[RMDB]
RNA sequence: GGGAACGACUCGAGUAGAGUCGAAAAGAUAUGGACAGAUCCAUCGCCGAGGAACCUCGGAAACGAGGUUCUACCCACCGGUAAUGGAGUCUGUCCUAAGUCAAACCGCCGUCUUCGGACGGCGGAAUCUUUAUAAUGGCUUCGGCCAUUAUAAAGAAAAAGAAACAACAACAACAAC
Reactivity to DMS in 0.01 (KOAc 150mM, MgCl2 10mM, bicine 150mM(pH8.5), 24C), signal-to-noise 1, nucleotides 027 to 126: g030a080u010a300u000g000g030a050c010a000g000a160u000c000c000a020u000c030g040c010c000g000a100g020g000a000a000c000c000u000c020g000g000a060a040a250c000g010a030g010g020u000u000c010u000a020c080c040c120a300c110c000g010g010u000a140a020u000g000g000a020g000u000c000u000g000u000c000c000u000a010a140g000u010c020a000a070a180c000c030g150c040c000g010u000c010u000u010c270g020g070a000c020g000g050c030g030g000a030a000
The data come from the RNA Mapping Database (RMDB), library TTRDES. An RNA of 177 nucleotides, treated with DMS and read out base by base. For DMS the reverse transcriptase was MarathonRT. Reactivities are rounded to 0.1 and cut off at 0 and 3. Reactivities are given for positions 27 through 126. Conditions: 150 mM KOAc, 10 mM MgCl2 and 150 mM bicine (pH 8.5), 24 C.